[RMDB]
RNA sequence: GGGAACGACUCGAGUAGAGUCGAAAACCCACGUGGUUCGCCACGUGGGAAAUAAAAUCAGCGGUAAUUCGAGGCCAAAUAUUACCGCUGAUGGCCUCGAAAAAAGUACACAGUUCGCUGUGUACAAGGAGUUAUUAGGGUUCGCCCUAAUAACUCCAAAAGAAACAACAACAACAAC
Reactivity to DMS in 0.01 (KOAc 150mM, MgCl2 10mM, bicine 150mM(pH8.5), 24C), signal-to-noise 1, nucleotides 027 to 126: c030c000c000a020c020g030u010g000g000u000u020c190g000c000c000a000c000g000u000g010g020g010a000a000a010u000a070a060a070a040u000c000a010g010c010g000g000u020a010a020u020u000c210g000a080g000g030c110c060a090a070a070u000a010u000u000a000c000c000g000c000u000g000a000u000g000g000c100c000u000c100g000a030a050a030a040a100a100g010u000a000c000a000c000a030g000u000u020c150g030c000u000g000u000g010u000a010c000a040a060
Reactivity to 2A3 in 0.01 (KOAc 150mM, MgCl2 10mM, bicine 150mM(pH8.5), 24C), signal-to-noise 2, nucleotides 027 to 126: c000c010c000a000c000g010u020g000g060u050u050c180g040c070c000a000c000g000u020g000g010g000a030a130a000u140a000a050a000a000u020c000a000g000c000g020g000u010a000a040u070u100c100g080a110g130g100c030c020a040a120a000u170a010u030u020a020c000c010g000c000u000g000a000u000g000g010c010c000u060c010g030a190a030a010a000a020a000g000u000a000c000a000c000a000g010u060u120c130g010c090u000g000u000g010u000a000c000a010a020